[RMDB]
RNA sequence: GGGAACGACUCGAGUAGAGUCGAAAAGACGCCUAAUGGCGAAAAUGUAAAAUCAACUACACACAAGAUAAAUACAAGUGCUAAAUCUCGUAACUAGUUGAUCUAGUCCAGCGGUGAGAUCCGCAGAAUAUCCGUGAGUCUUCGGACUCACGGAUAUAAAAGAAACAACAACAACAAC
Reactivity to 2A3 in 0.01 (KOAc 150mM, MgCl2 10mM, bicine 150mM(pH8.5), 24C), signal-to-noise 2, nucleotides 027 to 126: g020a010c000g000c000c000u260a260a130u300g000g000c070g130a020a020a070a020u170g020u080a020a020a020a020u000c000a010a010c000u000a000c060a020c010a000c000a070a000g020a080u090a070a060a020u200a100c030a170a130g160u000g190c010u130a100a180a000u020c000u040c020g080u000a010a040c020u000a020g000u000u030g000a000u000c030u090a020g110u060c000c070a090g000c010g000g000u040g070a080g000a040u070c000c000g000c040a010g060a100
Reactivity to DMS in 0.01 (KOAc 150mM, MgCl2 10mM, bicine 150mM(pH8.5), 24C), signal-to-noise 2, nucleotides 027 to 126: g040a300c000g000c000c060u000a120a160u080g000g000c030g040a020a100a150a150u000g010u090a050a130a080a060u000c000a020a030c040u000a000c080a180c300a130c090a090a070g000a010u020a050a020a220u000a100c160a060a010g050u010g020c080u000a150a120a100u000c030u040c100g010u070a150a300c300u000a030g020u000u000g000a000u000c000u000a120g000u000c000c100a010g000c030g010g060u150g000a070g000a050u000c020c010g000c090a120g000a000

This 177-nucleotide RNA was probed chemically with 2A3 and DMS. The RNA was probed in 150 mM KOAc, 10 mM MgCl2 and 150 mM bicine (pH 8.5) at 24 C. For 2A3, 1,023 sequencing reads were counted.